Notes:
Source: RMDB library ARCHII, as collected in RNAgym. Structure probing data (DMS and 2A3) for a 207-nucleotide construct. For DMS, 3,557 sequencing reads were counted. The reactions ran in a buffer of 150 mM KOAc, 10 mM MgCl2 and 150 mM bicine (pH 8.5), at 24 C. For DMS the reverse transcriptase was MarathonRT. The 2A3 profile rests on 1,809 reads.
RNA sequence: GGGAACGACUCGAGUAGAGUCGAAAAGGGGUUGUGAGGUUAUAGGUAGCAAGUCAGGUUUGUCGCUGUGAAAGACUAAACACAUCGUUUAGAUGGAAACAAAGAAUACGCUUUAGCUGCUUAGUUCAGCUACACCUUGGAUAACUUAUUCUAUACGCUUUAUUCGUGUGUUCGCACACGAAUAAAGAAAAGAAACAACAACAACAAC
Reactivity to DMS in 0.01 (KOAc 150mM, MgCl2 10mM, bicine 150mM(pH8.5), 24C), signal-to-noise 2, nucleotides 027 to 156: g040g010g030g020u000u000g020u010g010a050g000g030u000u010a090u010a100g030g020u010a050g050c060a060a120g030u000c060a140g030g010u000u020u010g040u000c060g040c050u000g040u000g010a110a090a090g020a110c030u000a030a030a080c050a150c040a070u010c070g010u000u000u000a080g010a090u000g020g010a130a070a060c040a040a030a100g000a140a060u000a070c100g000c040u010u000u000a110g060c020u020g000c060u000u000a100g000u000u010c010a040g070c030u000a030c120a080c100c020u010u000g010g010a140u010a040a070c080u000u000a100u000u000c030u000a120u000a080c140g020
Reactivity to 2A3 in 0.01 (KOAc 150mM, MgCl2 10mM, bicine 150mM(pH8.5), 24C), signal-to-noise 3, nucleotides 027 to 156: g030g010g000g020u100u080g010u010g030a030g000g020u040u030a040u050a080g040g030u040a010g020c030a030a020g000u060c040a020g000g040u010u050u080g050u070c010g000c030u030g020u020g080a070a050a040g040a020c030u030a030a050a000c020a000c010a130u070c060g000u080u040u080a030g000a060u030g020g040a050a100a030c040a030a090a010g040a040a070u160a070c070g030c050u030u050u060a030g000c020u010g000c020u100u080a020g030u180u120c000a000g020c010u000a000c030a030c030c010u030u100g020g030a020u060a130a000c010u000u070a040u110u020c030u020a080u000a120c060g010